[RMDB]
RNA sequence: GGGAACGACUCGAGUAGAGUCGAAAAACCAAGUCUAGGGGCCGAUGAGGGUUGGCUCAAAGUAGGGUUUUGACUUGAAAACUCAAGCUGUGACCCCAAAACGAUGGAGGUAAAUGAGAAUCCUCCUAAAACUAUGGACACUUCGGUGUCCAUAGAAGUAGAUGGCUAACUUCGGUUAGCCAUCUACAAAAGAAACAACAACAACAAC
Reactivity to 2A3 in 0.01 (KOAc 150mM, MgCl2 10mM, bicine 150mM(pH8.5), 24C), signal-to-noise 2, nucleotides 027 to 156: a000c010c010a050a010g090u000c050u130a000g000g010g030g000c010c010g060a090u100g110a110g050g160g000u030u120g040g000c000u050c000a100a140a020g090u120a050g020g000g000u020u030u080u080g010a060c000u040u020g010a150a090a120a060c060u020c010a010a000g020c010u010g080u120g190a170c020c000c000c060a000a060a010a000c050g030a040u090g010g010a010g000g030u060a100a140a120u270g000a040g080a040a040u030c000c010u000c000c000u050a030a070a000a000c010u000a000u000g020g000a010c000a000c040u020u040c160g050g010u000g000u000c010c000a000u000a000g000a020a010